[RMDB]
RNA sequence: GGGAACGACUCGAGUAGAGUCGAAAAGCUCGGAGACGAGCAAGGCUGACAAAACGCUGUCCCAACCUCCACGUGGUGUCGGCUGGAUAAUGCUGCAUUAUGUUGCAUUUAUCAACUGGGAAAGAAAACGACUGACCGUCUUCGGACGGUCAGUCGUAAAAGAAACAACAACAACAAC
Reactivity to 2A3 in 0.01 (KOAc 150mM, MgCl2 10mM, bicine 150mM(pH8.5), 24C), signal-to-noise 1, nucleotides 027 to 126: g000c010u000c000g020g000a140g000a000c000g000a000g040c000a000a020g010g000c000u010g020a090c070a010a130a000a070c110g010c220u060g000u000c000c000c000a000a250c000c000u040c000c010a010c180g060u050g000g000u000g010u120c000g000g000c000u040g030g000a040u040a010a000u050g000c040u040g000c000a050u000u140a060u300g000u000u060g050c020a000u100u180u130a010u000c000a020a050c190u010g000g000g070a000a090a090g130a000a000a000